[RMDB]
RNA sequence: GGGAACGACUCGAGUAGAGUCGAAAAAGGAAGGAUCUGCCAAAACAACGGAUUACGAUCUUGGAGCUGAGUUUGGCACCGACACCGAUGACAUCACGCUCGAAGCCUCUACUGGGAUAUUAUUGUCCUGUUGGAUCGGAUUCGUCCGAUCCAACAGAAAAGAAACAACAACAACAAC
Reactivity to 2A3 in 0.01 (KOAc 150mM, MgCl2 10mM, bicine 150mM(pH8.5), 24C), signal-to-noise 1, nucleotides 027 to 126: a020g070g000a040a040g000g030a010u000c050u100g000c040c000a000a050a060a070c040a000a110c020g040g010a040u070u100a060c090g050a050u040c020u100u170g070g020a010g020c070u060g010a040g150u010u130u090g030g010c020a030c030c010g010a020c020a020c090c000g050a060u080g010a030c000a050u050c030a030c050g000c020u080c070g050a120a000g030c020c000u010c030u050a120c010u020g070g000g030a030u070a040u190u100a130u130u140g050u030c010
Reactivity to DMS in 0.01 (KOAc 150mM, MgCl2 10mM, bicine 150mM(pH8.5), 24C), signal-to-noise 1, nucleotides 027 to 126: a080g020g000a100a020g030g000a010u010c030u020g010c000c020a040a010a070a080c160a010a110c090g000g010a010u000u000a100c140g000a070u020c030u000u000g030g010a140g020c030u000g070a040g000u000u000u000g020g000c020a050c050c020g000a130c140a120c070c010g020a000u020g000a090c060a010u000c030a030c070g000c040u020c050g000a090a070g000c030c000u000c030u030a050c070u000g010g000g020a080u000a080u010u000a090u020u000g020u000c030